[RMDB]
RNA sequence: GGGAACGACUCGAGUAGAGUCGAAAAAGUUUGUUCACAAACUGCAUACAAUAAUGCGAUGUUUUGUGCAAAGCACAAAACUCGAAGAUAAACAGUGAGGCUGAAUUUCUGCCGAACUGUUUAUCUUCCUACUGCAGGCCUUCGGGCCUGCAGUAGGAAAAGAAACAACAACAACAAC
Reactivity to 2A3 in 0.01 (KOAc 150mM, MgCl2 10mM, bicine 150mM(pH8.5), 24C), signal-to-noise 3, nucleotides 027 to 126: a010g050u050u010u020g090u220u140c110a050c020a190a060a010c000u030g120c050a060u100a180c060a020a260u230a100a080u160g090c020g010a040u220g000u000u000u000u000g010u020g000c120a300a190a000g000c000a020c000a010a030a000a000c010u020c020g040a000a000g000a000u000a000a000a000c010a000g000u000g010a010g040g000c020u080g060a220a160u300u300u060c030u180g010c000c000g000a000a000c000u000g000u000u000u000a000u000c000u000u000

Source information
This 177-nucleotide RNA was probed chemically with 2A3. It was measured as part of the RMDB library RFM100. The reactions ran in a buffer of 150 mM KOAc, 10 mM MgCl2 and 150 mM bicine (pH 8.5), at 24 C.